[RMDB]
RNA sequence: GGGAACGACUCGAGUAGAGUCGAAAAGAUAUGGAUCCGUACAGACAUGAAGACGUAUCGGAAACGAUACAACUUCAACAGCUGUGACGGAUCCUAAGUCAAACGAUCGAACUUCGGUUCGAUCGAACAUCACAACGAUGUUCGCAUCGUUGUGAUGAAAAGAAACAACAACAACAAC
Reactivity to DMS in 0.01 (KOAc 150mM, MgCl2 10mM, bicine 150mM(pH8.5), 24C), signal-to-noise 4, nucleotides 027 to 126: g000a000u000a220u000g010g000a010u000c000c000g020u000a020c000a020g010a020c100a260u010g000a020a000g010a160c300g010u000a000u000c010g020g000a050a070a100c010g030a000u010a010c010a080a300c000u000u000c000a030a050c300a140g000c000u000g000u000g000a020c020g000g000a010u010c010c000u000a010a060g000u000c010a130a100a160c010g010a000u010c010g000a010a000c010u010u020c270g010g030u000u010c000g000a000u000c000g000a030a120
Reactivity to 2A3 in 0.01 (KOAc 150mM, MgCl2 10mM, bicine 150mM(pH8.5), 24C), signal-to-noise 3, nucleotides 027 to 126: g000a000u050a010u120g010g000a010u010c010c010g000u000a000c000a000g070a060c100a290u300g000a010a000g040a040c060g000u000a000u000c000g000g000a020a040a020c010g000a000u000a010c010a080a120c020u020u000c020a190a080c120a120g020c010u000g010u080g240a040c000g000g000a000u000c000c010u000a010a000g010u000c050a110a040a110c040g000a010u000c000g000a000a010c010u090u120c300g140g000u000u000c000g020a000u000c000g000a000a000